[RMDB]
RNA sequence: GGGAACGACUCGAGUAGAGUCGAAAAUCUCAGCUUUGUCAUAUGCCGGCAAACGUCUGGUGAAGGAUUUUAGUGUCAAAGGACAGAUGGUUAGCUUACAGGAGGAAGGCGAGGAGUAUACGCCGCGCACUUUUUCUAUCUUCGGAUAGAAAAAGUGAAAAGAAACAACAACAACAAC
Reactivity to DMS in 0.01 (KOAc 150mM, MgCl2 10mM, bicine 150mM(pH8.5), 24C), signal-to-noise 5, nucleotides 027 to 126: u010c010u000c010a130g010c090u000u000u000g000u010c030a070u000a120u010g010c080c040g010g010c050a060a070a070c140g000u000c020u000g010g010u000g020a160a100g010g000a060u000u000u000u010a090g020u010g010u000c030a040a070a080g010g000a050c050a050g000a080u000g010g000u000u010a090g010c040u000u010a080c120a070g000g000a080g000g020a070a090g010g000c040g010a070g000g000a080g000u000a080u000a090c100g000c030c030g000c170g000
Reactivity to 2A3 in 0.01 (KOAc 150mM, MgCl2 10mM, bicine 150mM(pH8.5), 24C), signal-to-noise 3, nucleotides 027 to 126: u000c020u000c000a020g020c030u080u050u070g040u020c020a030u100a040u290g020c020c030g050g000c040a110a070a120c050g040u000c040u050g060g040u110g060a070a060g000g030a030u020u080u110u220a150g020u110g030u040c050a090a060a050g060g010a030c010a020g040a030u080g030g050u040u060a010g010c030u020u040a050c020a030g050g010a010g020g040a080a030g020g010c030g010a020g040g000a040g040u050a060u000a100c070g000c020c020g030c020g060